[RMDB]
RNA sequence: GGGAACGACUCGAGUAGAGUCGAAAAUCCUAAGUCUUGCUUGGACCUCCUUGGACCAUACUACCCACCGCUCUCGGAAACGAGAGCGAGGUAUGCUAGGAGCUAGCAAGAUAUGGAAAAAUCGCUACCUGUACAGUUCGCUGUACAGGUAGCGAAACACAGGGUUAUACUUCGGUAUAACCCUGUGAAAAGAAACAACAACAACAAC
Reactivity to DMS in 0.01 (KOAc 150mM, MgCl2 10mM, bicine 150mM(pH8.5), 24C), signal-to-noise 1, nucleotides 027 to 156: u000c000c000u000a030a290g000u000c010u000u010g040c040u000u000g090g020a090c240c000u000c010c000u010u010g040g000a170c250c020a050u010a030c000u010a060c040c020c000a300c100c010g030c010u000c000u040c010g000g000a190a160a240c000g030a010g020a010g010c000g000a000g050g000u020a010u000g000c040u000a030g000g090a080g020c020u020a020g050c000a020a020g050a030u000a120u000g010g010a040a090a190a170a080u030c000g000c010u000a010c010c000u000g000u000a020c000a030g010u000u000c260g000c010u000g000u000a000c000a010g000g000u000a000g000c000g000a010a010a090
Reactivity to 2A3 in 0.01 (KOAc 150mM, MgCl2 10mM, bicine 150mM(pH8.5), 24C), signal-to-noise 3, nucleotides 027 to 156: u030c000c010u010a110a030g000u010c000u010u010g000c010u080u120g110g130a270c030c020u040c010c000u040u110g070g020a090c100c030a020u020a030c010u040a060c020c110c090a060c050c000g000c000u000c000u000c000g040g080a170a080a040c000g000a000g000a010g030c000g000a000g010g000u000a000u020g010c010u030a000g000g020a020g050c000u000a000g000c000a010a000g000a000u040a030u040g010g040a010a050a010a130a090u090c010g000c000u020a000c000c000u000g030u020a010c010a010g010u040u150c130g020c140u000g000u000a000c000a000g010g000u010a000g000c000g000a010a000a000